[RMDB]
RNA sequence: GGGAACGACUCGAGUAGAGUCGAAAAGAAAAGUAGUCUAGUGGUUGACUGCGAACCACGAAAAAGGAUCCAGGCCUUGGAUCCGAAGGCCGAAAGCAUCUAAACUCAUGAUGCGAUGAGGAAGAAAGGGUAUCUUUAUCUUCGGAUAAAGAUACCCAAAAGAAACAACAACAACAAC
Reactivity to 2A3 in 0.01 (KOAc 150mM, MgCl2 10mM, bicine 150mM(pH8.5), 24C), signal-to-noise 3, nucleotides 027 to 126: g120a000a100a010a050g130u230a030g030u010c000u030a060g000u030g060g010u020u050g040a050c110u140g030c050g030a020a000c000c000a000c010g080a030a010a000a000a100g040g000a000u000c000c000a010g300g000c080c110u080u030g010g000a010u000c000c000g000a000a000g050g010c010c030g000a040a030a010g010c010a000u010c010u110a100a100a060c040u050c070a080u290g040a000u010g010c030g010a070u090g030a010g040g010a030a080g030a040a110a060
Reactivity to DMS in 0.01 (KOAc 150mM, MgCl2 10mM, bicine 150mM(pH8.5), 24C), signal-to-noise 3, nucleotides 027 to 126: g030a050a050a050a060g000u010a050g000u000c020u000a110g020u000g000g020u000u010g000a100c060u000g010c070g000a060a030c010c000a010c050g000a030a040a110a070a130g000g010a010u000c040c000a060g020g020c190c160u040u010g000g020a010u010c000c000g000a060a030g010g040c000c000g000a170a040a110g000c020a000u000c000u010a050a060a190c270u040c170a050u000g000a000u000g000c000g000a070u020g000a230g000g000a150a080g010a070a070a110